The record gives the reactivity of an RNA of 207 nucleotides to 2A3. The reactions ran in a buffer of 150 mM KOAc, 10 mM MgCl2 and 150 mM bicine (pH 8.5), at 24 C. Source: RMDB library VIROID, as collected in RNAgym. Reactivities are rounded to 0.1 and cut off at 0 and 3.
RNA sequence: GGGAACGACUCGAGUAGAGUCGAAAAAGUCACCACACAGUGACUGACCGUGGAGAAUAGUUCCACCUCUCGCCGCCACCCUGCGCACGGCAGACCUUACCGUCUGGCGUGGGUGGCGAGAGUACCCCGCAGGGGACUUCGGAGAAGCCUCCUCCGGCCUUAUUGCAGACUUCGGUCUGCAAUAAGGAAAAGAAACAACAACAACAAC
Reactivity to 2A3 in 0.01 (KOAc 150mM, MgCl2 10mM, bicine 150mM(pH8.5), 24C), signal-to-noise 2, nucleotides 027 to 156: a000g020u030c020a020c050c020a100c030a040c040a180g000u010g000a000c010u020g010a020c000c010g000u000g000g000a000g000a000a030u030a030g020u010u000c000c000a000c000c000u000c000u010c000g000c000c000g030c000c010a080c020c000c000u000g010c000g000c000a000c000g100g080c020a000g000a000c000c000u110u160a090c030c080g020u030c010u050g200g100c000g000u010g010g000g010u030g010g000c000g010a000g000a000g000u010a010c040c030c040c010g000c000a000g020g010g000g020a050c080u120u080c020g010g010a000g040a180a150g080c020c050u050c000c010u010c010c020g040g000